[RMDB]
RNA sequence: GGGAACGACUCGAGUAGAGUCGAAAAGUCUGCGGGUCAAGAGCAAACUAACUGUAAUACUAGUUCCUUAGCUUAUUACGAACCUGUGCAGGGUCGUAAAAUGCUGAUGGCUCUUCUUUCUGAUAAUACCGCCUACCGUUCGCGGUAGGCAAAAGAAACAACAACAACAAC
Reactivity to DMS in 0.01 (KOAc 150mM, MgCl2 10mM, bicine 150mM(pH8.5), 24C), signal-to-noise 4, nucleotides 027 to 129: g030u020c040u020g050c080g010g030g030u000c060a050a040g000a070g020c040a150a110a070c090u020a080a070c000u000g050u050a140a090u040a090c120u080a050g030u000u000c130c060u020u020a000g030c020u010u110a190u010u050a000c020g000a030a080c030c000u030g000u080g050c170a130g010g020g060u040c020g000u000a000a030a060a040u020g020c030u020g010a030u040g030g040c020u030c060u050u000c060u000u020u050c090u000g000a090u030a000a000u030a050c000c020
Reactivity to 2A3 in 0.01 (KOAc 150mM, MgCl2 10mM, bicine 150mM(pH8.5), 24C), signal-to-noise 7, nucleotides 027 to 129: g030u020c020u000g000c010g040g000g020u060c070a050a020g000a010g060c020a060a050a050c010u080a030a020c040u080g070u230a090a070u070a200c090u050a000g000u040u040c020c000u040u020a000g000c000u020u110a040u050u000a130c000g030a110a160c010c000u070g050u100g160c190a100g000g000g000u000c000g000u000a000a020a020a040u110g000c000u030g000a050u100g070g010c000u000c000u060u000c010u030u060u000c020u020g050a050u030a170a050u070a120c020c040